[RMDB]
RNA sequence: GGGAACGACUCGAGUAGAGUCGAAAAAGACAUACGUUCGCGUAUGUCUGACGGGCACCUGACCCUAAGGAAAUGCUCUAUGUCAGGACACACUGAUUGUGAUACCUCGAGAUUUCGAUCUCGAGAACUGUCUACCACGCUUCGGCGUGGUAGACAGAAAAGAAACAACAACAACAAC
Reactivity to DMS in 0.01 (KOAc 150mM, MgCl2 10mM, bicine 150mM(pH8.5), 24C), signal-to-noise 1, nucleotides 027 to 126: a010g000a020c040a000u000a010c000g070u000u000c110g040c000g010u000a000u000g010u000c000u000g020a120c090g010g000g000c070a110c000c030u000g000a090c020c010c000u010a080a070g050g000a100a080a140u000g020c020u000c010u000a040u040g010u010c000a020g000g000a230c150a090c070a060c060u010g000a100u000u000g050u000g000a160u010a050c160c000u000c000g030a000g000a030u000u000u040c190g010a030u010c000u000c000g000a010g000a070a150
Reactivity to 2A3 in 0.01 (KOAc 150mM, MgCl2 10mM, bicine 150mM(pH8.5), 24C), signal-to-noise 1, nucleotides 027 to 126: a000g000a010c000a010u000a020c000g000u020u040c290g070c040g080u020a000u040g030u020c000u000g010a020c010g000g040g050c000a040c040c000u020g060a050c030c000c000u040a050a100g140g000a100a020a090u190g010c020u010c040u050a100u080g040u000c000a000g000g030a110c010a000c000a000c100u190g070a290u290u130g040u050g000a050u140a130c000c000u000c030g000a030g000a000u000u060u060c150g090a020u000c000u000c010g000a000g000a000a000
Overview:
The record gives the reactivity of an RNA of 177 nucleotides to DMS and 2A3. For DMS the reverse transcriptase was MarathonRT. The RNA was probed in 150 mM KOAc, 10 mM MgCl2 and 150 mM bicine (pH 8.5) at 24 C. 2A3 adducts were read by reverse transcription with SuperScript II with manganese. The 2A3 profile rests on 871 reads.